[RMDB]
RNA sequence: GGGAACGACUCGAGUAGAGUCGAAAAGCGCGCGAGAGGCGGGACGAUUGUUUUUCGUCGUCGUCAAGGACGGCGUGGGCGGAGUCGGGGUGCUUACCGUGGUUCUACGGAGGUACUCUCCGCGCGGCGAGGCUUUAAGUUUCGACUUAAAGCCUCGAAAAGAAACAACAACAACAAC
Reactivity to DMS in 0.01 (KOAc 150mM, MgCl2 10mM, bicine 150mM(pH8.5), 24C), signal-to-noise 1, nucleotides 027 to 126: g010c020g040c020g030c130g000a060g020a050g010g030c090g000g000g000a090c020g010a140u010u020g000u000u000u010u000u000c040g000u000c010g010u000c000g040u020c270a060a110g000g030a040c000g020g000c030g040u010g000g000g010c070g000g010a140g010u000c040g010g000g010g010u000g010c020u000u000a100c010c010g010u000g020g010u020u020c130u010a020c010g010g000a080g000g000u000a100c040u000c000u000c060c040g020c020g000c000g020g000

An RNA of 177 nucleotides, treated with DMS and read out base by base. It was measured as part of the RMDB library OK2TRN. DMS adducts were read by reverse transcription with MarathonRT. Conditions: 150 mM KOAc, 10 mM MgCl2 and 150 mM bicine (pH 8.5), 24 C. For DMS, 1,343 sequencing reads were counted.